This 207-nucleotide RNA was probed chemically with 2A3 and DMS. For DMS, 5,186 sequencing reads were counted. 2A3 is a SHAPE reagent: it acylates the 2'-hydroxyl of flexible nucleotides of all four kinds. For 2A3, 1,660 sequencing reads were counted. The RNA was probed in 150 mM KOAc, 10 mM MgCl2 and 150 mM bicine (pH 8.5) at 24 C.
[RMDB]
RNA sequence: GGGAACGACUCGAGUAGAGUCGAAAAUGUUGGACAGGCUUGUAAAGUUUAACUCUAUUAGAAAUCAUAAUAACUUAGAAGGUCUUGUUAAUGAUAUACAGCAAGGGCAGAAAAGUGUUGUAAUGUCUAAUCUUAAAGCUAAUAGAAACAUGUCUAACAUAUCCUGUACUUUCGAGUACAGGAUAUGAAAAGAAACAACAACAACAAC
Reactivity to 2A3 in 0.01 (KOAc 150mM, MgCl2 10mM, bicine 150mM(pH8.5), 24C), signal-to-noise 3, nucleotides 027 to 156: u030g000u000u040g000g020a060c040a050g020g080c040u070u060g060u180a080a130a110g020u060u090u120a040a030c050u010c020u050a030u050u030a070g000a030a080a050u060c030a020u030a270a030u070a130a120c010u040u050a030g070a110a020g110g100u000c000u040u020g010u000u050a070a050u030g020a010u030a050u070a240c030a010g000c020a000a030g050g030g010c010a010g110a030a070a030a040g060u080g000u040u070g030u060a100a050u040g040u000c020u090a020a080u070c010u080u130a080a080a000g020c010u040a040a020u020a070g000a020a060a000c050a060u070g030u040c030u030a000a010
Reactivity to DMS in 0.01 (KOAc 150mM, MgCl2 10mM, bicine 150mM(pH8.5), 24C), signal-to-noise 3, nucleotides 027 to 156: u010g020u000u000g010g010a110c070a100g000g030c020u010u000g010u000a110a160a190g000u000u000u000a020a040c010u010c020u000a100u000u000a030g000a060a070a040u000c000a010u000a040a040u000a070a050c020u000u010a050g000a280a220g000g010u000c020u000u010g020u000u000a080a150u010g030a200u000a180u010a110c070a120g000c000a030a040g010g010g000c020a030g010a140a090a050a050g010u000g010u000u010g040u000a010a020u000g010u010c010u000a020a040u000c200u010u010a040a040a070g010c030u020a010a040u010a120g000a130a090a080c030a040u000g010u010c000u000a060a130